Structure probing data (2A3) for a 207-nucleotide construct. The data come from the RNA Mapping Database (RMDB), library OK3TST. As a SHAPE reagent, 2A3 marks flexible, mostly unpaired nucleotides at the ribose 2'-OH. The reactions ran in a buffer of 150 mM KOAc, 10 mM MgCl2 and 150 mM bicine (pH 8.5), at 24 C.
[RMDB]
RNA sequence: GGGAACGACUCGAGUAGAGUCGAAAAUAUGGUCCUGCCCUCACUGAGCUAACCUUGGUGGACCCUUGAGAAGGCUAGUUAACCUCAGGGACCUCCUCUUGUAAUGCUGGCCCCAGGAAUUCAUAGAUUUAAAGCCAGACCUCAAUAUUUGAUUGAAGUAUUACCAUGGCUUCGGCCAUGGUAAUACAAAAGAAACAACAACAACAAC
Reactivity to 2A3 in 0.01 (KOAc 150mM, MgCl2 10mM, bicine 150mM(pH8.5), 24C), signal-to-noise 1, nucleotides 027 to 156: u100a010u000g010g010u000c000c000u020g020c070c010c000u080c000a030c040u050g030a000g040c040u020a090a100c000c000u020u020g000g020u030g000g050a020c030c000c000u060u080g010a060g020a200a060g090g050c000u030a050g010u010u140a030a070c060c000u000c040a030g000g010g020a100c000c040u010c000c010u000c010u030u070g090u160a090a030u070g040c040u000g010g010c010c010c000c020a070g000g110a100a000u100u030c030a030u050a150g010a090u030u090u140a030a020a000g040c000c000a040g040a110c040c130u110c000a060a000u210a140u190u190u210g140a060u030u110g110a210a010
The 2A3 profile rests on 380 reads.